[RMDB]
Conditions: 150 mM KOAc, 10 mM MgCl2 and 150 mM bicine (pH 8.5), 24 C. Chemical mapping of a 177-nucleotide RNA with DMS and 2A3. Reactivities are rounded to 0.1 and cut off at 0 and 3. For DMS the reverse transcriptase was MarathonRT.

RNA sequence: GGGAACGACUCGAGUAGAGUCGAAAAGAUAUGGAGCGUUGUGGGAGCGUAUCCUUCGGAAACGAAGGUAAGCGCUUUGAUCACACACGCUCCUAAGUCAAAACGCCAACUCCUUCGGGAGUUGGCGCUACACAGUCAUGUUCGCAUGACUGUGUAGAAAAGAAACAACAACAACAAC
Reactivity to DMS in 0.01 (KOAc 150mM, MgCl2 10mM, bicine 150mM(pH8.5), 24C), signal-to-noise 3, nucleotides 027 to 126: g010a030u010a060u020g010g010a010g030c000g010u000u000g010u000g000g020g010a000g050c000g030u000a190u010c010c000u000u000c000g030g000a000a020a060c010g010a020a000g010g000u000a060a160g030c000g020c020u000u000u010g010a040u000c020a020c000a020c300a030c010g010c000u000c000c000u000a000a060g000u000c020a100a090a080a270c050g020c020c000a010a020c000u010c010c020u010u010c270g030g050g010a040g020u000u000g000g010c010g020
Reactivity to 2A3 in 0.01 (KOAc 150mM, MgCl2 10mM, bicine 150mM(pH8.5), 24C), signal-to-noise 2, nucleotides 027 to 126: g000a010u020a000u070g010g000a000g000c010g050u110u020g000u020g000g000g040a050g000c000g010u020a050u130c000c010u000u020c020g010g000a060a000a000c010g000a000a000g000g060u020a250a050g020c000g000c000u250u180u030g010a010u000c010a010c000a000c000a010c060g010c010u000c000c000u010a010a000g000u000c010a040a060a040a170c030g000c010c000a000a020c000u000c020c000u110u300c300g080g010g000a000g000u000u000g000g000c000g000
The 2A3 profile rests on 7,427 reads.